Source: RMDB libraries RFM100 and RFMREP, as collected in RNAgym. An RNA of 177 nucleotides, treated with DMS and 2A3 and read out base by base. For DMS the reverse transcriptase was MarathonRT.

[RMDB]
RNA sequence: GGGAACGACUCGAGUAGAGUCGAAAAUCCAUGCUUCUCUGACGUUGCAUGGAGUCUAUGUCUGGACCUUCUCCAUUUCCUCUUUCAAGAGAAUGUGAGCAUUGAAGGAUUCGGACAUAGCCUUCAUCUUUGCUAUCUCAUUCGUGAGAUAGCAAAGAAAAGAAACAACAACAACAAC
Reactivity to DMS in 0.01 (KOAc 150mM, MgCl2 10mM, bicine 150mM(pH8.5), 24C), signal-to-noise 3, nucleotides 027 to 126: u000c010c000a010u010g000c010u000u010c030u010c130u020g010a100c150g000u010u010g000c030a000u000g000g020a010g010u000c000u000a020u000g010u000c000u030g000g000a010c010c000u000u020c000u020c020c000a010u010u000u000c130c000u000c010u000u040u030c250a110a060g000a030g010a050a020u000g000u030g010a100g010c300a120u040u030g020a010a010g000g000a190u000u000c000g010g010a010c010a000u000a010g020c030c030u020u010c070a070u020
Reactivity to 2A3 in 0.01 (KOAc 150mM, MgCl2 10mM, bicine 150mM(pH8.5), 24C), signal-to-noise 9, nucleotides 027 to 126: u000c000c000a000u000g000c010u030u040c060u020c170u260g100a060c160g030u000u000g000c010a010u000g000g000a000g000u000c000u000a000u000g000u000c000u010g010g000a000c000c000u010u010c010u000c000c000a010u020u040u070c080c010u030c010u080u300u140c170a200a020g010a010g010a020a010u060g090u150g040a080g040c120a190u090u230g030a010a020g010g100a210u010u010c000g000g000a000c000a000u000a000g000c000c000u030u080c020a050u000